[RMDB]
RNA sequence: GGGAACGACUCGAGUAGAGUCGAAAAUAAACGAUAAUUUAGAUGUAGAAACCUUGGAAUGCCGCCUCAGUUCCAAGCUCUUUCGUGGCACUGUAAACAGUCCUAUUGAGUUAGGGGCAGUCAACCAGCCCUGUAUUCAGUUCGCUGAAUACAGGGCAAAAGAAACAACAACAACAAC
Reactivity to DMS in 0.01 (KOAc 150mM, MgCl2 10mM, bicine 150mM(pH8.5), 24C), signal-to-noise 2, nucleotides 027 to 126: u050a060a020a070c160g000a180u090a050a060u010u010u010a130g000a130u040g000u000a140g000a000a010a050c180c060u010u000g000g020a030a010u000g000c130c030g000c080c030u050c050a250g010u000u000c000c000a010a000g030c010u000c000u040u020u000c040g000u010g000g000c040a040c020u020g040u030a060a030a090c150a050g010u000c000c000u030a030u000u020g020a100g020u020u030a110g010g010g000g020c070a100g000u050c210a040a120c040c130a070
Reactivity to 2A3 in 0.01 (KOAc 150mM, MgCl2 10mM, bicine 150mM(pH8.5), 24C), signal-to-noise 3, nucleotides 027 to 126: u030a010a070a010c050g050a060u050a160a090u120u140u190a130g040a140u100g010u060a030g050a050a010a000c090c010u020u000g030g000a020a000u020g050c050c050g000c000c060u060c020a010g010u030u000c010c000a020a000g000c010u010c000u000u040u030c030g000u040g010g060c090a010c040u010g000u050a010a180a080c000a040g030u000c000c000u060a100u110u200g160a110g220u080u220a080g000g000g000g000c000a010g060u030c000a000a050c020c000a000

Conditions: 150 mM KOAc, 10 mM MgCl2 and 150 mM bicine (pH 8.5), 24 C. An RNA of 177 nucleotides, treated with DMS and 2A3 and read out base by base.